Chemical mapping of a 177-nucleotide RNA with 2A3 and DMS. DMS adducts were read by reverse transcription with MarathonRT. For DMS, 4,195 sequencing reads were counted.
RNA sequence: GGGAACGACUCGAGUAGAGUCGAAAAGAAAAGCGCGGAAUAAAAGUGGACUGAUAUUCUAGCACUGAAUAGUCCACGAUAGUGCUAGUAAAGUUUCGCGCGAAAAGUACGAAAGUACGAAAUAAAAGGGAUACUAAUACUUCGGUAUUAGUAUCCCAAAAGAAACAACAACAACAAC
Reactivity to 2A3 in 0.01 (KOAc 150mM, MgCl2 10mM, bicine 150mM(pH8.5), 24C), signal-to-noise 2, nucleotides 027 to 126: g030a010a070a030a040g000c000g000c000g000g020a030a030u090a050a070a030a000g010u010g010g000a000c020u060g090a080u040a150u130u000c000u000a000g000c020a010c030u030g040a090a140u030a090g010u000c000c000a000c010g000a000u110a030g000u000g010c000u000a000g010u100a030a150a000g000u000u000u000c000g010c000g030c010g020a020a020a030a000g000u000a000c000g040a080a000a000g010u000a000c030g060a000a010a160u190a010a070a020a040
Reactivity to DMS in 0.01 (KOAc 150mM, MgCl2 10mM, bicine 150mM(pH8.5), 24C), signal-to-noise 2, nucleotides 027 to 126: g000a110a120a050a210g000c000g010c000g030g000a020a000u020a120a120a230a120g040u000g000g010a010c000u000g000a150u050a050u010u010c010u000a010g000c010a000c000u000g030a090a050u010a020g000u010c010c000a010c000g000a030u050a020g020u010g000c010u000a010g010u010a030a070a090g020u010u000u000c020g040c030g000c000g010a030a030a040a080g000u000a000c000g000a070a040a130g000u000a010c000g030a050a110a080u020a040a060a130a170